[RMDB]
RNA sequence: GGGAACGACUCGAGUAGAGUCGAAAAUCAUAAGAACGCGUAAAAGUAAGGCUCCACUCUUCUUUAAUGCGAUUAAGCCCUUUUGCCUGACGCUGUUCGUAAUCGUCACCGAAAUUCAGCACCGUCACAGCAUCGCUAUGUUCGCAUAGCGAUGCUGAAAAGAAACAACAACAACAAC
Reactivity to DMS in 0.01 (KOAc 150mM, MgCl2 10mM, bicine 150mM(pH8.5), 24C), signal-to-noise 1, nucleotides 027 to 126: u000c110a120u030a100a100g010a040a170c070g000c050g050u000a090a010a040a020g010u010a140a030g020g000c050u000c080c070a010c150u000c020u000u010c010u000u000u000a110a050u000g000c010g000a110u000u000a010a120g010c010c020c000u000u010u000u000g010c050c020u000g000a140c050g000c040u020g020u010u010c130g010u060a070a040u000c090g000u000c110a060c130c010g040a050a070a100u010u000c090a100g000c050a070c130c040g020u000c080a080